Source information: Conditions: 150 mM KOAc, 10 mM MgCl2 and 150 mM bicine (pH 8.5), 24 C. Structure probing data (2A3 and DMS) for a 177-nucleotide construct. The 2A3 profile rests on 2,270 reads.

RNA sequence: GGGAACGACUCGAGUAGAGUCGAAAAGGCCACUUCUUCGGAAGUGGCCAAAGGGAAACCAAGCAGUACGUUCGUAUACGUACAGCAAAAAUAAUUACGAAAAAAGACUCAGCUUCGGCUGAGUCAACUAAUUAGGGAAGUUCGCUUCCCUAAUUAGAAAAGAAACAACAACAACAAC
Reactivity to 2A3 in 0.01 (KOAc 150mM, MgCl2 10mM, bicine 150mM(pH8.5), 24C), signal-to-noise 2, nucleotides 027 to 126: g000g020c000c020a000c000u020u010c010u050u060c150g130g000a020a010g000u000g010g020c000c000a000a000a040g010g000g000a010a060a000c000c000a050a050g010c000a000g010u000a000c010g010u030u140c150g050u140a090u050a120c000g010u010a020c020a020g000c030a010a060a090a010a000u220a050a110u210u130a040c040g060a030a030a060a000a060a110g000a000c010u000c020a000g020c010u050u250c300g050g000c010u010g010a000g000u000c000a000a000
Reactivity to DMS in 0.01 (KOAc 150mM, MgCl2 10mM, bicine 150mM(pH8.5), 24C), signal-to-noise 3, nucleotides 027 to 126: g000g040c000c000a000c000u000u000c010u010u020c220g020g010a000a000g010u000g000g030c000c000a000a010a010g000g010g000a080a090a290c010c010a140a120g010c020a080g010u000a010c000g010u000u000c240g000u000a100u020a030c000g010u000a000c010a050g030c010a020a060a050a100a050u010a060a090u030u010a050c140g020a000a070a060a110a100a120g000a020c000u000c000a010g010c010u000u000c240g040g020c010u010g000a020g000u000c000a000a070